Source information: Conditions: 150 mM KOAc, 10 mM MgCl2 and 150 mM bicine (pH 8.5), 24 C. An RNA of 177 nucleotides, treated with DMS and 2A3 and read out base by base. Reactivities are given for positions 27 through 126.

RNA sequence: GGGAACGACUCGAGUAGAGUCGAAAAAUAUCGUAUGCAGUUCCUUUUGGCGGAAGCUAUUACCUGUUGAUAUACUUCCCCACACUCUGAUCAACCUUCUCCUCCUGCACGAACGGUACGAUGUGUCGGGUAUUGUUCUGUUCGCAGAACAAUACCCAAAAGAAACAACAACAACAAC
Reactivity to DMS in 0.01 (KOAc 150mM, MgCl2 10mM, bicine 150mM(pH8.5), 24C), signal-to-noise 1, nucleotides 027 to 126: a080u000a030u020c010g010u010a060u000g000c040a050g010u000u000c060c160u000u000u000u000g030g000c120g040g020a030a060g000c280u000a070u000u020a080c090c070u020g040u010u020g000a020u000a070u020a100c100u000u000c000c020c000c040a070c240a060c060u000c090u000g000a130u000c090a110a050c080c090u000u000c000u000c020c030u000c050c050u000g020c150a050c150g010a030a020c010g010g000u000a030c010g000a000u000g000u000g000u010c250
Reactivity to 2A3 in 0.01 (KOAc 150mM, MgCl2 10mM, bicine 150mM(pH8.5), 24C), signal-to-noise 1, nucleotides 027 to 126: a000u070a020u010c040g020u030a040u070g170c060a130g050u000u040c020c000u050u080u090u040g140g010c140g020g010a010a030g010c020u020a040u120u070a080c030c040u180g070u160u110g060a020u010a020u010a110c020u000u020c020c020c010c010a010c010a000c040u110c060u110g040a070u140c060a070a060c000c010u080u080c030u010c030c000u080c000c010u010g020c040a030c130g010a030a010c000g040g000u000a010c020g040a010u040g020u060g050u090c040